[RMDB]
RNA sequence: GGGAACGACUCGAGUAGAGUCGAAAACAUCAGGUCUAGUGAGACUUACUCAUUAACAUGAGAACAGCAUGGGAAAACCCGCCCCCACAAUGAGGUCCCUCCCAUGACUCAUGGGGAUUAUUGGAGCCGCACCAUGGAGCUUCGGCUCCAUGGUGCGAAAAGAAACAACAACAACAAC
Reactivity to 2A3 in 0.01 (KOAc 150mM, MgCl2 10mM, bicine 150mM(pH8.5), 24C), signal-to-noise 1, nucleotides 027 to 126: c050a060u140c080a000g030g000u020c040u050a000g110u050g170a040g010a080c000u170u170a070c000u050c030a000u050u030a130a100c020a100u080g040a040g110a140a100c120a030g120c000a050u000g000g030g030a000a000a090a110c000c000c000g000c010c000c000c030c000a090c000a000a300u190g050a120g060g110u000c010c010c040u000c000c000c000a110u090g000a150c000u000c050a000u050g130g000g000g120a030u120u000a040u000u300g020g000a020g000c000